[RMDB]
Description
The record gives the reactivity of an RNA of 177 nucleotides to 2A3 and DMS. For DMS the reverse transcriptase was MarathonRT. 2A3 adducts were read by reverse transcription with SuperScript II with manganese. 2A3 is a SHAPE reagent: it acylates the 2'-hydroxyl of flexible nucleotides of all four kinds. The DMS profile rests on 2,233 reads.
RNA sequence: GGGAACGACUCGAGUAGAGUCGAAAAGAAAGAAGAAAGAGACACUGAGUGAGAAAAAUAAACGUAAUAGUGUCGGCAAUGAGUGAAAAACACGUAGCCAUUUCUCACAAACGCGAAGAAACGCGAAGCCUACUGGACUGUUCGCAGUCCAGUAGGCAAAAGAAACAACAACAACAAC
Reactivity to 2A3 in 0.01 (KOAc 150mM, MgCl2 10mM, bicine 150mM(pH8.5), 24C), signal-to-noise 3, nucleotides 027 to 126: g050a000a100a000g060a020a040g110a040a160a000g110a020g030a040c000a030c010u050g040a020g110u000g000a000g060a020a020a030a000a010u280a040a130a010c030g010u080a030a130u050a210g020u010g020u050c000g020g030c000a000a200u160g020a070g100u060g060a140a030a010a020a020c040a000c010g010u030a030g010c000c020a010u000u030u020c030u000c000a000c000a040a060a000c030g000c000g010a100a180g080a190a160a000c000g000c010g010a030a000
Reactivity to DMS in 0.01 (KOAc 150mM, MgCl2 10mM, bicine 150mM(pH8.5), 24C), signal-to-noise 2, nucleotides 027 to 126: g010a050a080a100g010a090a030g020a120a070a050g000a160g000a000c000a080c040u000g000a070g000u020g000a000g020a010a000a020a100a120u080a070a090a040c200g040u030a120a130u060a090g000u000g010u000c090g000g010c070a120a070u020g000a060g020u000g000a110a030a140a110a000c030a020c040g010u000a060g030c010c000a130u000u000u000c000u000c000a060c020a010a030a090c010g000c000g020a160a100g020a020a040a060c010g000c000g020a160a050